RNA sequence: GGGAACGACUCGAGUAGAGUCGAAAAGCGAUAUGUCUCAAUCGCGUUGAUAAUUCUGCGGGCUUGGCGUUCUUGAACAUCCAGCCCGGUCAUCCGCAUGAGGGCGCGGUGAUGGUGGCCUGCGUCACAGGCAGGGACUAUUCGUAGUCCCUGCCUGAAAAGAAACAACAACAACAAC
Reactivity to 2A3 in 0.01 (KOAc 150mM, MgCl2 10mM, bicine 150mM(pH8.5), 24C), signal-to-noise 1, nucleotides 027 to 126: g030c020g020a020u020a040u290g110u010c030u000c000a050a020u040c000g000c020g040u030u070g030a060u050a220a140u160u050c070u210g070c010g010g050g000c000u010u070g010g000c020g030u030u000c050u110u170g120a020a000c010a020u070c030c010a000g020c020c010c000g000g000u010c010a020u000c010c000g080c070a050u130g110a080g020g110g010c010g000c000g080g010u020g050a080u130g070g100u030g060g000c050c000u030g000c050g010u000c030a020
Reactivity to DMS in 0.01 (KOAc 150mM, MgCl2 10mM, bicine 150mM(pH8.5), 24C), signal-to-noise 3, nucleotides 027 to 126: g010c010g010a030u000a030u030g010u000c040u020c030a130a030u000c000g010c020g020u000u000g000a060u000a120a120u010u000c120u000g000c040g010g000g010c000u010u040g030g000c300g000u000u000c050u020u000g000a040a030c050a040u010c010c020a070g020c010c000c020g000g010u000c030a010u010c060c040g020c090a080u000g000a110g020g000g010c060g030c050g010g020u000g010a070u000g020g000u000g020g000c050c030u000g010c060g010u000c060a140
Conditions: 150 mM KOAc, 10 mM MgCl2 and 150 mM bicine (pH 8.5), 24 C. Chemical mapping of a 177-nucleotide RNA with 2A3 and DMS.